[RMDB]
RNA sequence: GGGAACGACUCGAGUAGAGUCGAAAAACAUUAAGUUUCGACUUAAUGUAAACCCGAUGAAGCGGCACAUACGGAGCUUCAUACAUCUAACAGUGCAAAUAAAAAGUUGAUCCUUCGGGAUCAACAACAAAUAGUUCAGAUUCGUCUGAACUAUUUGAAAAGAAACAACAACAACAAC
Reactivity to 2A3 in 0.01 (KOAc 150mM, MgCl2 10mM, bicine 150mM(pH8.5), 24C), signal-to-noise 9, nucleotides 027 to 126: a000c010a000u010u010a010a000g010u020u050u170c180g070a010c000u000u000a000a000u000g000u010a080a030a030c000c000c000g000a040u030g010a000a000g000c030g100g020c090a040c020a120u300a130c160g140g050a050g020c010u010u010c000a010u060a030c050a080u080c060u130a090a090c030a080g040u040g090c040a030a090a090u190a070a160a030a030a020g000u000u000g000a000u000c010c010u030u060c260g080g000g000a000u000c000a000a000c000a000a000
Reactivity to DMS in 0.01 (KOAc 150mM, MgCl2 10mM, bicine 150mM(pH8.5), 24C), signal-to-noise 7, nucleotides 027 to 126: a030c000a000u000u000a010a000g000u000u000u020c190g020a030c000u000u000a000a000u000g000u000a030a090a140c000c000c020g010a050u000g010a030a010g010c000g020g020c050a060c060a130u010a140c180g010g010a180g010c000u000u000c010a030u000a070c120a050u000c120u010a080a080c150a090g010u000g010c070a120a080a090u010a050a070a100a130a100g000u000u000g000a010u000c010c000u000u010c190g030g010g000a010u000c000a000a000c000a070a100
An RNA of 177 nucleotides, treated with 2A3 and DMS and read out base by base. For DMS, 10,800 sequencing reads were counted. 2A3 adducts were read by reverse transcription with SuperScript II with manganese. High DMS reactivity at an A or C suggests that its Watson-Crick edge is free. Reactivities are given for positions 27 through 126. 2A3 is a SHAPE reagent: it acylates the 2'-hydroxyl of flexible nucleotides of all four kinds. DMS adducts were read by reverse transcription with MarathonRT. For 2A3, 19,890 sequencing reads were counted.